This 207-nucleotide RNA was probed chemically with 2A3 and DMS. For 2A3 the reverse transcriptase was SuperScript II with manganese. The reactions ran in a buffer of 150 mM KOAc, 10 mM MgCl2 and 150 mM bicine (pH 8.5), at 24 C. The data come from the RNA Mapping Database (RMDB), library OK3TST. The DMS profile rests on 9,375 reads.
[RMDB]
RNA sequence: GGGAACGACUCGAGUAGAGUCGAAAAGGGUAGGCUGUUUUCAGUCUACCCGAUGUGCCUGUUUUCAGGCACGGAUAUCAGCCAUCCGUAAGCCGAGGAUGGCCUAUCUGCUGAGCAUUCUGUGUGGAUUGUGAGGCAGUUAGCAGACGCGGCGACAAGUGAUAUAAUGCUUCGGCAUUAUAUCACUAAAAGAAACAACAACAACAAC
Reactivity to 2A3 in 0.01 (KOAc 150mM, MgCl2 10mM, bicine 150mM(pH8.5), 24C), signal-to-noise 5, nucleotides 027 to 156: g010g000g000u010a000g010g000c010u030g120u180u120u210u300c020a010g000u000c000u000a000c000c000c010g000a000u030g000u000g000c000c000u040g050u140u100u070u300c020a000g000g000c000a000c000g020g020a140u170a070u130c070a000g000c000c010a000u000c000c000g060u060a110a010g000c000c000g010a010g000g000a000u000g000g000c000c000u000a010u000c000u000g000c000u010g010a010g000c000a010u030u000c040u040g280u100g170u300g250g010a030u060u010g010u010g020a020g000g000c000a000g000u000u010a000g000c000a010g030a100c090g010c030g140g010c010g000a020c080a070
Reactivity to DMS in 0.01 (KOAc 150mM, MgCl2 10mM, bicine 150mM(pH8.5), 24C), signal-to-noise 4, nucleotides 027 to 156: g010g000g030u000a000g010g010c000u000g030u000u010u000u000c000a010g020u000c000u000a000c010c000c000g010a000u000g030u000g050c020c010u010g000u020u010u010u000c020a040g030g030c020a000c000g000g000a170u000a110u010c100a180g000c010c020a050u010c000c010g020u000a090a170g010c040c040g000a200g000g010a050u000g000g010c020c000u010a010u000c010u000g020c000u000g010a300g000c020a030u000u020c000u000g020u020g040u010g040g010a040u000u000g010u010g010a300g010g000c010a030g000u020u000a030g020c080a140g020a120c100g030c050g000g010c010g000a180c110a150